[RMDB]
RNA sequence: GGGAACGACUCGAGUAGAGUCGAAAAACACUCGUGCGAGUAAUCCACGAUCUGCUGUGGCGCGCUAAGCCCUGGCCCGGACCCUCGAGGGAAGCGAUUCUGCAGAGAACAGGACCCCCGGAGAUGGCGGCGCCAGACUACACCCUCGCUGCACAAACUAUCAGAAAAUCUUCGGAUUUUCUGAUAGAAAAGAAACAACAACAACAAC
Reactivity to 2A3 in 0.01 (KOAc 150mM, MgCl2 10mM, bicine 150mM(pH8.5), 24C), signal-to-noise 2, nucleotides 027 to 156: a000c040a010c020u040c010g020u050g010c160g030a100g030u160a090a170u020c020c000a000c020g000a060u040c040u200g080c050u010g050u010g030g000c010g000c000g000c070u090a070a020g010c000c080c020u000g020g000c030c010c010g070g180a170c010c000c000u020c020g010a210g000g000g020a070a000g110c050g070a120u010u010c010u030g000c060a090g070a030g010a300a030c020a010g000g020a030c020c010c010c020c020g080g030a080g000a020u020g020g010c000g020g000c080g000c010c000a000g000a000c000u070a020c000a060c030c040c000u000c010g050c010u040g000c010a010c020a020a110a020

This 207-nucleotide RNA was probed chemically with 2A3.
Conditions: 150 mM KOAc, 10 mM MgCl2 and 150 mM bicine (pH 8.5), 24 C.
2A3 adducts were read by reverse transcription with SuperScript II with manganese.
It was measured as part of the RMDB library ARCHII.